Chemical mapping of a 207-nucleotide RNA with 2A3.
RNA sequence: GGGAACGACUCGAGUAGAGUCGAAAAGAGAUGGCGAGAGCCAUCGGUAGUAUAGCGAAAAUGAUAAAUGAGAAGAGCUCUAAACGCCUAAGUAGAGUUAAAAUAAUUAGACAGGCACUACUACAAACACGGCCUCGAACGUUCGCGUUCGAGGCAACUAAAUGUUCCGGUUCGCCGGAACAUUUAGAAAAGAAACAACAACAACAAC
Reactivity to 2A3 in 0.01 (KOAc 150mM, MgCl2 10mM, bicine 150mM(pH8.5), 24C), signal-to-noise 1, nucleotides 027 to 156: g050a010g000a020u000g000g000c030g000a060g010a000g100c000c000a000u010c000g020g000u020a020g000u000a020u070a080g050c080g030a040a150a070a010u150g050a070u130a230a110a170u150g030a090g040a130a110g030a010g030c020u000c000u000a030a020a000c050g010c020c000u030a160a020g000u060a020g030a010g020u190u210a020a000a000a010u080a000a020u180u000a010g020a010c010a040g000g030c020a010c010u030a030c000u030a030c100a000a220a000c050a000c080g070g030c030c000u000c000g000a000a000c010g000u080u030c230g040c000g100u030u000c050g010a000g010g070c000a000a000
2A3 adducts were read by reverse transcription with SuperScript II with manganese.